[RMDB]
About this RNA
The data come from the RNA Mapping Database (RMDB), library M2RFPK. This 207-nucleotide RNA was probed chemically with DMS and 2A3. For DMS, 6,321 sequencing reads were counted. 2A3 adducts were read by reverse transcription with SuperScript II with manganese. Conditions: 150 mM KOAc, 10 mM MgCl2 and 150 mM bicine (pH 8.5), 24 C. Values cover nucleotides 27 to 156. Reactivities are rounded to 0.1 and cut off at 0 and 3.

RNA sequence: GGGAACGACUCGAGUAGAGUCGAAAAUAAGCAAAAGACAACCACAUUUCCCGCUGACAAUAGCGUUAUCCCUCUGCACUUCGGUAAUAUGAGGGCACAGUAAAUCCCGCAAGGAUGAGAAUGUGAUUAAACAGUUACAGCUUCGGCUGUAACUGAACAACUUAUCAGUCUUCGGACUGAUAAGUUGAAAAGAAACAACAACAACAAC
Reactivity to DMS in 0.01 (KOAc 150mM, MgCl2 10mM, bicine 150mM(pH8.5), 24C), signal-to-noise 3, nucleotides 027 to 156: u000a090a150g030c070a080a110a110a180g030a170c060a090a060c030c030a020c030a080u000u000u000c010c020c020g040c050u000g010a160c100a080a110u000a070g010c020g030u000u010a120u000c010c010c000u000c020u000g000c080a060c050u010u000c210g050g000u000a070a170u000a090u000g000a020g020g030g020c100a020c020a070g020u000a080a100a070u000c000c000c030g030c180a130a180g030g000a050u010g010a050g010a060a080u000g030u000g000a110u000u000a060a100a170c010a020g010u000u000a010c000a020g020c010u000u010c300g060g020c000u000g010u000a000a000c010u000g020a030a100
Reactivity to 2A3 in 0.01 (KOAc 150mM, MgCl2 10mM, bicine 150mM(pH8.5), 24C), signal-to-noise 6, nucleotides 027 to 156: u120a020a020g050c040a060a090a070a010g130a090c070a060a060c080c020a070c030a120u040u040u040c000c010c010g000c060u040g030a060c100a160a180u090a110g030c020g050u090u100a100u110c000c000c000u010c010u010g000c010a020c040u070u060c170g080g020u050a030a030u090a070u300g000a000g000g020g000c000a000c000a000g000u010a000a080a000u000c000c010c010g130c130a010a070g000g000a010u020g010a010g010a020a020u020g010u020g010a030u050u240a090a110a020c010a000g000u000u010a000c000a010g000c000u030u090c180g110g000c000u000g000u010a000a000c000u000g000a010a010